[RMDB]
RNA sequence: GGGAACGACUCGAGUAGAGUCGAAAAAGAGGGUCUUUUGCAGGACACACCUUACUUCACGCAGUAGUUGACCCAGGGAGCGGCGCCCGGCUGCCCGCUGCGUUGCAGGUGAACGGCGGUGAAAAAGGAUCAGCAAUAUGUUCGCAUAUUGCUGAUCAAAAGAAACAACAACAACAAC
Reactivity to 2A3 in 0.01 (KOAc 150mM, MgCl2 10mM, bicine 150mM(pH8.5), 24C), signal-to-noise 2, nucleotides 027 to 126: a020g140a090g010g000g010u000c000u020u130u100u100g030c090a020g010g070a030c030a000c020a010c060c000u030u120a080c050u060u060c020a010c040g020c010a050g020u170a050g020u030u090g100a070c000c040c000a020g030g040g010a040g000c060g040g010c030g020c060c060c000g110g000c040u070g030c020c000c020g000c030u010g020c020g050u040u100g060c020a010g000g080u020g050a070a000c040g030g010c050g000g040u070g040a050a060a030a000a010g130
Reactivity to DMS in 0.01 (KOAc 150mM, MgCl2 10mM, bicine 150mM(pH8.5), 24C), signal-to-noise 3, nucleotides 027 to 126: a050g010a090g000g000g010u000c000u000u000u000u010g020c100a070g000g020a080c080a110c100a120c050c010u000u000a050c100u000u000c050a050c050g000c040a060g000u000a080g000u000u010g000a090c020c030c030a140g000g000g000a070g030c030g020g010c100g020c040c060c030g010g000c040u000g020c020c010c030g020c020u000g000c100g010u010u000g000c100a070g010g020u000g020a060a070c130g000g000c060g020g010u010g000a050a040a090a070a080g010